[RMDB]
Background:
Structure probing data (2A3) for a 207-nucleotide construct. Source: RMDB library RNAMAK, as collected in RNAgym. The 2A3 profile rests on 3,080 reads. The reactions ran in a buffer of 150 mM KOAc, 10 mM MgCl2 and 150 mM bicine (pH 8.5), at 24 C. For 2A3 the reverse transcriptase was SuperScript II with manganese.
RNA sequence: GGGAACGACUCGAGUAGAGUCGAAAAGAUAUGGACUCCUCAAUGCCUUGGAUUUAUGGUCGAGGAUGUUCGGAAACGAACAUCUCCCCACCGACCAUUGUCAGGCAUGGGAGUCCUAAGUCAAACUUACCAUUUCUCUUCGGAGAAAUGGUAAGAAGUGUAAUUCGCAGUUCGCUGCGAAUUACACAAAAGAAACAACAACAACAAC
Reactivity to 2A3 in 0.01 (KOAc 150mM, MgCl2 10mM, bicine 150mM(pH8.5), 24C), signal-to-noise 2, nucleotides 027 to 156: g020a010u020a010u110g000g000a000c000u010c010c030u140c190a130a060u010g000c000c040u140u300g150g010a060u200u250u120a000u040g000g000u000c000g000a010g000g000a000u000g000u000u010c000g020g000a030a050a010c000g000a000a010c000a000u000c050u050c050c020c000c000a030c010c000g000a000c000c000a000u000u000g020u030c160a090g000g000c000a000u010g010g000g000a000g000u020c000c000u000a000a000g000u000c010a040a020a070c000u000u000a000c000c000a000u000u010u000c000u000c000u040u080c290g080g000a000g000a000a000a000u000g020g000u010a000a000g000a030a000